[RMDB]
RNA sequence: GGGAACGACUCGAGUAGAGUCGAAAAGAUAUGGAGUCACAAGCUCAUCGAUCUAUAUGGAAGUGCUAAUAUAUCGGAAACGAUAUAUUAGCAUGAAGUAUAGGGAGAGCUUGGGACUCCUAAGUCACGUUCUAUUACUGUUCGCAGUAAUAGAACGAAAAGAAACAACAACAACAAC
Reactivity to 2A3 in 0.01 (KOAc 150mM, MgCl2 10mM, bicine 150mM(pH8.5), 24C), signal-to-noise 3, nucleotides 027 to 126: g060a000u100a050u180g000g000a000g000u020c000a010c000a030a000g000c000u010c010a250u300c140g050a040u030c010u010a000u010a010u020g060g050a150a120g100u020g000c000u010a010a010u000a000u000a000u010c000g070g010a120a060a060c000g010a000u010a010u000a000u000u000a010g000c000a000u040g000a010a000g000u000a000u000a010g000g020g010a070g000a000g000c000u000u000g000g000g010a000c000u010c000c010u010a030a010g010u030c020a030
Reactivity to DMS in 0.01 (KOAc 150mM, MgCl2 10mM, bicine 150mM(pH8.5), 24C), signal-to-noise 4, nucleotides 027 to 126: g000a040u010a300u000g000g010a020g030u000c000a020c020a010a020g030c000u020c010a290u000c270g000a040u010c000u000a000u000a000u000g000g020a300a210g030u000g020c000u000a020a000u000a010u000a000u000c010g010g000a100a080a220c000g010a010u000a000u000a010u010u000a010g010c000a000u000g000a270a230g020u000a010u000a000g000g000g000a040g000a000g020c010u010u000g000g000g000a010c000u000c000c000u010a000a050g000u010c030a300
This 177-nucleotide RNA was probed chemically with 2A3 and DMS. Reactivities are given for positions 27 through 126. For DMS the reverse transcriptase was MarathonRT. Conditions: 150 mM KOAc, 10 mM MgCl2 and 150 mM bicine (pH 8.5), 24 C. 2A3 adducts were read by reverse transcription with SuperScript II with manganese.